An RNA of 207 nucleotides, treated with DMS and 2A3 and read out base by base.
It was measured as part of the RMDB library RNAMAK.
The 2A3 profile rests on 3,693 reads.
High DMS reactivity at an A or C suggests that its Watson-Crick edge is free.
Values cover nucleotides 27 to 156.
For DMS, 2,632 sequencing reads were counted.
Conditions: 150 mM KOAc, 10 mM MgCl2 and 150 mM bicine (pH 8.5), 24 C.
[RMDB]
RNA sequence: GGGAACGACUCGAGUAGAGUCGAAAACAUCCGUAUUCGUACGGAUGAAAAAGCGUACUACUGUCGGACAAGCGAUAAGCUGUUUCCCAAAUAGGAAACAGCUUUUGACGCUUCCCUCCGAGCAGUAUCGCAAAAAAUGGUCAGUUCGCUGACCAAAGUCAGUUAGACGAUUCGUCGUCUAACUGACAAAAGAAACAACAACAACAAC
Reactivity to DMS in 0.01 (KOAc 150mM, MgCl2 10mM, bicine 150mM(pH8.5), 24C), signal-to-noise 1, nucleotides 027 to 156: c020a010u000c000c010g030u000a030u000u000c210g030u000a000c030g000g020a000u020g010a050a050a030a060a120g050c010g050u000a030c030u000a020c000u000g010u000c030g030g030a100c150a080a050g000c010g000a140u000a060a010g020c010u000g000u000u000u000c000c000c010a040a170a290u000a030g000g010a020a020a000c000a000g000c000u010u000u000u030g020a270c070g000c000u000u010c010c060c030u010c020c000g010a040g020c000a010g000u000a010u000c010g020c000a000a010a060a060a090a160u000g010g020u000c010a020g010u010u000c300g000c000u000g020a020c000c010a000a020a100
Reactivity to 2A3 in 0.01 (KOAc 150mM, MgCl2 10mM, bicine 150mM(pH8.5), 24C), signal-to-noise 1, nucleotides 027 to 156: c000a000u010c000c010g000u010a020u030u100c180g050u010a000c000g000g000a000u000g090a050a020a000a010a000g030c040g030u080a090c030u000a000c000u050g010u020c000g000g010a040c060a250a000g000c020g020a040u000a110a000g000c000u000g000u030u000u000c010c010c000a200a300a130u300a090g000g000a000a000a000c000a010g000c000u000u000u000u010g010a010c020g000c000u000u010c000c010c000u000c000c000g030a050g010c010a000g010u000a010u140c020g000c000a070a060a000a010a000a080u080g000g000u010c000a000g010u010u120c130g030c170u010g000a010c010c010a030a000a000